[RMDB]
RNA sequence: GGGAACGACUCGAGUAGAGUCGAAAAUGAAAGACUAGGAAACUCGAAUAAAUAAGUGGUAUUCCUAGCGAAUCCACGGCGAGGAAACUAGGACACUAACCAUGUGAUCCCGGACGCUAGAAAAAAAGUAUACGAUACUCUUCGGAGUAUCGUAUACAAAAGAAACAACAACAACAAC
Reactivity to DMS in 0.01 (KOAc 150mM, MgCl2 10mM, bicine 150mM(pH8.5), 24C), signal-to-noise 2, nucleotides 027 to 126: u000g000a180a110a090g000a180c000u000a000g040g000a150a130a140c010u010c010g000a120a110u000a090a130a080u000a080a100g010u000g000g000u010a040u000u000c070c030u010a050g000c030g000a080a010u000c010c030a040c010g020g000c030g010a060g000g000a120a120a080c020u000a010g000g010a120c060a050c020u000a060a140c180c180a100u000g010u000g000a170u000c020c010c020g000g010a080c070g000c130u020a030g020a020a000a060a010a020a050a170
Reactivity to 2A3 in 0.01 (KOAc 150mM, MgCl2 10mM, bicine 150mM(pH8.5), 24C), signal-to-noise 2, nucleotides 027 to 126: u130g010a060a110a000g090a110c000u030a010g070g020a060a090a040c020u020c050g050a090a110u130a200a140a010u180a290a050g020u030g020g030u070a110u040u000c000c000u000a010g000c040g020a000a000u020c000c000a020c050g030g040c030g020a000g030g060a170a000a000c010u010a010g010g010a000c000a000c040u080a110a050c040c010a060u110g010u000g090a160u030c010c000c000g040g050a030c050g000c090u120a060g140a140a060a010a020a000a000a040

This 177-nucleotide RNA was probed chemically with DMS and 2A3.
Conditions: 150 mM KOAc, 10 mM MgCl2 and 150 mM bicine (pH 8.5), 24 C.
The DMS profile rests on 1,326 reads.
It was measured as part of the RMDB library M2PK90.